RNA sequence: GGGAACGACUCGAGUAGAGUCGAAAAAGGUGAAAGCCCUGUAGACGAAAUCCAGAGUGGGAAUUAGUGGUAUCCUGAGUAAUACAUCACACGUGGAACGAUGUAUGAACCCGCGCGGACCACCGCGGUCAGUAAUCUGGUUCGCCAGAUUACUGACAAAAGAAACAACAACAACAAC
Reactivity to 2A3 in 0.01 (KOAc 150mM, MgCl2 10mM, bicine 150mM(pH8.5), 24C), signal-to-noise 1, nucleotides 027 to 126: a000g010g020u060g020a110a070a040g020c000c000c000u010g040u040a060g030a050c050g030a040a030a020u060c040c020a010g030a050g150u100g000g040g000a000a120u130u020a110g060u040g060g030u050a050u090c010c010u040g010a010g030u020a040a020u020a000c010a010u000c000a010c010a010c180g060u120g080g060a090a030c080g010a010u010g010u000a000u010g020a000a020c000c030c000g030c000g010c000g030g020a020c040c000a090c020c010g020c010g020
Reactivity to DMS in 0.01 (KOAc 150mM, MgCl2 10mM, bicine 150mM(pH8.5), 24C), signal-to-noise 2, nucleotides 027 to 126: a020g010g040u010g030a120a120a290g000c040c000c020u000g010u010a070g010a110c040g010a110a070a160u000c020c090a100g000a120g040u010g000g000g010a130a080u010u000a060g000u000g010g010u000a100u010c000c010u020g000a100g000u000a070a030u000a010c010a000u000c030a110c100a160c190g020u000g000g000a140a150c170g010a010u010g010u000a000u000g000a080a170c050c040c040g020c000g020c010g000g020a060c040c250a040c040c010g010c040g000